[RMDB]
RNA sequence: GGGAACGACUCGAGUAGAGUCGAAAACGGUUGGGACUGAGGUGCCUACAACGUGUUUUUGAGUGGGCCUGUGUCUCUGUGUGCGCCGUGUGCGGAUAGCUUGCUAUGCGUGUGUGGUUGUGUGUGGACUAUAUGACCACUUCGGUGGUCAUAUAGUAAAAGAAACAACAACAACAAC
Reactivity to DMS in 0.01 (KOAc 150mM, MgCl2 10mM, bicine 150mM(pH8.5), 24C), signal-to-noise 2, nucleotides 027 to 126: c050g000g020u000u000g010g000g010a080c020u010g000a110g020g030u010g010c000c010u000a050c040a070a120c190g010u000g000u010u010u010u000u000g020a300g020u000g010g000g020c000c050u010g000u010g010u000c020u000c030u000g000u010g010u000g000c120g010c020c000g040u000g000u010g010c020g000g010a050u000a020g020c020u000u000g000c020u010a040u000g010c020g030u000g020u010g010u000g000g010u000u000g030u000g020u000g040u010g000g000
Reactivity to 2A3 in 0.01 (KOAc 150mM, MgCl2 10mM, bicine 150mM(pH8.5), 24C), signal-to-noise 2, nucleotides 027 to 126: c010g010g030u090u040g030g010g000a020c030u060g090a030g110g060u160g090c000c000u050a040c020a090a020c070g160u120g110u080u120u060u070u250g090a070g030u030g000g030g090c000c050u080g000u000g000u030c020u000c000u000g090u050g020u080g110c010g000c010c010g040u020g050u040g030c000g010g010a020u040a030g020c010u030u160g010c030u030a020u100g110c030g030u050g000u000g060u020g020g060u080u050g030u020g040u020g020u040g050g030